[RMDB]
The record gives the reactivity of an RNA of 177 nucleotides to DMS and 2A3.

RNA sequence: GGGAACGACUCGAGUAGAGUCGAAAACCCGUUCAUUUCGAUGAACGGGAGUGGGUAAGCCUAGGACCAGUAGUGGGACCCGUAGUGGCCGUGGGACCAGUAAAGAGUUAACAUUCGUGUUAACUAAGUUCUGAUUACAGUUCGCUGUAAUCAGAACAAAAGAAACAACAACAACAAC
Reactivity to DMS in 0.01 (KOAc 150mM, MgCl2 10mM, bicine 150mM(pH8.5), 24C), signal-to-noise 4, nucleotides 027 to 126: c000c010c000g000u010u000c000a000u000u000u020c160g010a020u000g020a020a010c020g000g000g000a050g010u010g000g000g010u000a100a090g010c030c040u010a110g000g010a110c040c040a060g000u000a070g010u010g000g000g000a110c040c020c030g020u000a050g010u010g010g000c060c040g000u010g020g000g000a160c070c050a100g000u000a050a120a120g020a050g000u000u000a000a010c000a030u000u010c220g020u000g000u010u000a000a010c000u000a040a080
Reactivity to 2A3 in 0.01 (KOAc 150mM, MgCl2 10mM, bicine 150mM(pH8.5), 24C), signal-to-noise 3, nucleotides 027 to 126: c000c000c010g000u010u010c010a030u030u050u180c230g150a010u000g000a020a000c000g000g020g010a010g050u140g060g000g020u080a070a030g050c030c010u040a060g030g040a050c000c020a050g030u080a050g060u200g030g020g060a080c000c000c030g020u080a070g050u050g030g010c030c030g030u080g030g000g000a040c010c000a010g040u080a020a160a030g170a020g030u000u000a000a000c010a030u030u150c270g070u010g010u010u000a010a000c010u020a080a030

Reactivities are rounded to 0.1 and cut off at 0 and 3. 2A3 adducts were read by reverse transcription with SuperScript II with manganese. For DMS the reverse transcriptase was MarathonRT. The reactions ran in a buffer of 150 mM KOAc, 10 mM MgCl2 and 150 mM bicine (pH 8.5), at 24 C.